[RMDB]
RNA sequence: GGGAACGACUCGAGUAGAGUCGAAAACAUCACCGUGACCAAACCGAUCGCGCAUGGCGAUGCGAGGGUAUUGAAGUAGGGUAGCCGGGUAAAGCCGAGGCAGUACAUGGCGCCGGCGACGGUGAGGAUUUCCUGUGGACUUCGGUCCACAGGAAAUAAAAGAAACAACAACAACAAC
Reactivity to DMS in 0.01 (KOAc 150mM, MgCl2 10mM, bicine 150mM(pH8.5), 24C), signal-to-noise 2, nucleotides 027 to 126: c060a110u010c000a000c000c000g030u020g030a120c050c000a010a100a110c090c000g020a020u000c020g020c010g010c080a040u000g030g040c210g000a040u030g000c030g000a030g020g000g010u020a030u010u000g010a060a140g010u020a110g000g010g030u060a160g030c000c000g000g000g000u080a080a120a240g000c000c020g040a050g000g020c140a080g060u070a110c130a140u000g000g000c000g000c000c000g000g010c000g020a030c030g000g010u000g050a030g020g000
Reactivity to 2A3 in 0.01 (KOAc 150mM, MgCl2 10mM, bicine 150mM(pH8.5), 24C), signal-to-noise 2, nucleotides 027 to 126: c090a070u000c000a000c000c000g030u040g070a020c020c000a000a030a090c000c040g080a130u000c030g000c050g040c070a040u150g280g050c080g150a010u020g070c020g020a100g080g030g040u080a170u030u230g080a050a020g010u100a080g010g000g040u000a050g000c000c000g030g000g060u130a130a110a000g020c000c040g020a030g090g000c070a030g060u230a050c090a170u230g000g010c050g000c000c000g000g000c000g000a020c000g000g000u000g000a000g020g040
Structure probing data (DMS and 2A3) for a 177-nucleotide construct. The 2A3 profile rests on 1,075 reads. For DMS, 2,887 sequencing reads were counted. The data come from the RNA Mapping Database (RMDB), library OK1LIB.